[RMDB]
RNA sequence: GGGAACGACUCGAGUAGAGUCGAAAACGUGUCCUGGACCUGUUGGCACCACAGACAGUUGCUCUGCUGUGCCUGUGGCCUCGGGGCAAAGAGAAAGUGGCGAUUUCUACACUCAGUGCUCGGGAACUGUUUUCUUUCUUUUCGAAGAAAGAAAACAAAAAGAAACAACAACAACAAC
Reactivity to 2A3 in 0.01 (KOAc 150mM, MgCl2 10mM, bicine 150mM(pH8.5), 24C), signal-to-noise 9, nucleotides 027 to 126: c040g030u030g020u020c000c010u020g020g040a060c010c010u080g050u230u090g110g000c020a020c030c020a000c010a000g030a010c010a080g100u150u110g110c070u020c020u050g010c010u010g010u000g000c000c010u070g050u050g040g010c010c040u090c030g000g000g000g000c000a020a070a000g140a010g010a020a110a010g040u050g030g020c020g020a020u050u150u000c020u030a030c030a020c050u030c020a050g040u020g070c020u010c010g020g010g010a050a040c040
Reactivity to DMS in 0.01 (KOAc 150mM, MgCl2 10mM, bicine 150mM(pH8.5), 24C), signal-to-noise 8, nucleotides 027 to 126: c100g010u010g010u000c000c010u000g010g000a070c040c000u000g020u030u010g000g010c020a040c030c090a070c010a010g010a060c050a280g020u030u020g010c120u000c020u000g010c170u010g010u000g000c020c010u010g000u010g000g000c040c020u030c020g010g010g000g000c010a020a030a080g010a120g010a050a080a100g010u000g010g010c080g010a110u000u010u010c030u010a080c130a080c050u000c050a080g020u010g000c040u000c020g000g000g010a140a090c170